[RMDB]
RNA sequence: GGGAACGACUCGAGUAGAGUCGAAAAGAUAUGGAGUGCCUUGUGGACGGAGAAGUAGGCUCGGAAACGAGCCUAUGGAAUCGUCACACACUGGGCACUCCUAAGUCAAACGCUAGUUCGCUAGCGAGUACGGCACAAUGUUCGCAUUGUGCCGUACAAAAGAAACAACAACAACAAC
Reactivity to DMS in 0.01 (KOAc 150mM, MgCl2 10mM, bicine 150mM(pH8.5), 24C), signal-to-noise 1, nucleotides 027 to 126: g000a130u000a300u000g000g050a030g040u000g000c000c000u000u030g000u000g000g000a000c000g000g000a010g000a300a300g050u000a030g000g000c000u000c000g010g010a040a220a270c030g040a000g040c000c000u000a000u000g000g000a150a150u000c000g000u000c020a050c030a300c090a030c300u000g000g050g000c000a010c010u010c000c000u000a000a050g000u000c030a190a030a150c000g010c010u000a010g000u000u010c300g010c030u000a000g000c000g030a020
Reactivity to 2A3 in 0.01 (KOAc 150mM, MgCl2 10mM, bicine 150mM(pH8.5), 24C), signal-to-noise 1, nucleotides 027 to 126: g040a050u100a070u190g000g010a050g000u000g000c010c010u030u030g030u040g040g000a030c000g020g020a170g030a070a000g010u010a010g010g000c010u000c010g010g020a050a160a040c010g010a000g000c000c000u000a000u010g010g000a020a010u050c020g000u000c000a000c000a010c000a000c230u040g000g010g000c020a000c000u020c000c000u000a020a010g000u000c030a070a010a040c010g000c020u000a000g020u080u070c300g020c200u020a000g000c000g000a030
The record gives the reactivity of an RNA of 177 nucleotides to DMS and 2A3. Reactivities are given for positions 27 through 126. The data come from the RNA Mapping Database (RMDB), library TTRDES. Conditions: 150 mM KOAc, 10 mM MgCl2 and 150 mM bicine (pH 8.5), 24 C. DMS adducts were read by reverse transcription with MarathonRT. The DMS profile rests on 679 reads.